[RMDB]
RNA sequence: GGGAACGACUCGAGUAGAGUCGAAAAAGUACAAAAAAUAGCUAAAGCUGCAGCAUUGUAGCUUAGUUUUGGCCUUUGGAAAAGAAAGAAACUUACAUGUAUGGAUGCUGACGUUUUUGCCCUUCCAGGAGGCCAUACAGAGGCCGUACAGAAGGAAACCCCUAUAUGCAUUCGUGCAUAUAGGGGUAAAAGAAACAACAACAACAAC
Reactivity to 2A3 in 0.01 (KOAc 150mM, MgCl2 10mM, bicine 150mM(pH8.5), 24C), signal-to-noise 1, nucleotides 027 to 156: a000g120u030a000c030a040a010a000a150a000a000u090a030g040c000u020a080a110a050g000c020u030g000c010a030g100c040a160u140u140g010u010a020g000c000u020u010a000g010u030u040u040u040g010g000c000c000u010u030u040g070g010a050a080a040a000g040a040a230a000g040a050a050a000c000u040u090a040c030a070u120g160u190a060u150g040g140a050u080g010c040u090g040a020c050g010u000u100u000u060u160g030c000c000c000u040u040c000c000a010g010g100a030g010g000c010c000a000u040a000c010a000g150a050g010g010c010c010g010u000a000c050a040g040a020a020g040g040a280a000
Reactivity to DMS in 0.01 (KOAc 150mM, MgCl2 10mM, bicine 150mM(pH8.5), 24C), signal-to-noise 1, nucleotides 027 to 156: a080g040u000a250c040a040a070a120a130a070a090u010a030g020c010u000a000a060a120g040c040u000g040c030a050g020c160a130u020u010g030u000a030g010c000u020u000a020g020u000u010u000u000g000g010c040c010u020u020u000g000g020a060a060a080a210g000a110a110a120g010a060a020a060c050u010u000a060c030a090u000g020u010a070u000g020g010a090u000g030c020u000g010a130c090g000u000u000u000u000u000g020c130c010c010u000u000c020c030a170g060g000a210g010g000c010c010a050u010a070c010a260g000a220g020g010c020c020g000u000a100c060a130g000a130a070g020g000a210a110

The record gives the reactivity of an RNA of 207 nucleotides to 2A3 and DMS. The DMS profile rests on 1,748 reads. It was measured as part of the RMDB library OK3TST.